Source: RMDB library 15KLIB, as collected in RNAgym.
Structure probing data (DMS and 2A3) for a 170-nucleotide construct.
For DMS, 173,214 sequencing reads were counted.
RNA sequence: GGGAACGACUCGAGUAGAGUCGAAAAUUGAAGGUAAAACAGCCUGUGGGUGAAACACACCCAGAGGGCCCAUUGGGCGCUAGCACUCUGGUAUCACGGUACCUUUGUGCGCCUGUUUUACCGAAGGGGAUCGUAUGGUUCGCCAUACGAAAAAGAAACAACAACAACAAC
Reactivity to DMS in 0.01 (KOAc 150mM, MgCl2 10mM, bicine 150mM(pH8.5), 24C), signal-to-noise 9, nucleotides 027 to 129: u020u010g020a200a120g020g020u010a000a000a000a000c020a020g000c000c000u030g000u000g010g000g000u030g000a080a180a090c250a170c000a010c010c020c010a000g040a000g010g020g030c000c010c020a040u040u050g000g000g000c000g000c020u040a070g050c000a010c000u000c020u000g000g010u000a000u020c040a100c280g030g000u010a020c000c020u000u000u000g000u010g010c000g000c010c000u000g000u000u000u000u000a020c000c010g010a050a040g020g010g000g010a210
Reactivity to 2A3 in 0.01 (KOAc 150mM, MgCl2 10mM, bicine 150mM(pH8.5), 24C), signal-to-noise 9, nucleotides 027 to 129: u120u100g050a100a010g000g010u020a000a000a000a000c000a000g000c010c000u190g070u010g120g000g000u010g030a050a090a010c140a020c000a000c050c010c000a010g040a000g020g000g000c000c000c010a030u280u300g000g000g000c020g010c090u130a040g010c000a000c000u000c000u000g000g000u000a000u020c020a030c210g140g000u010a000c000c000u000u000u000g000u000g000c000g000c000c000u010g000u000u000u000u000a000c010c000g000a010a000g010g010g000g010a030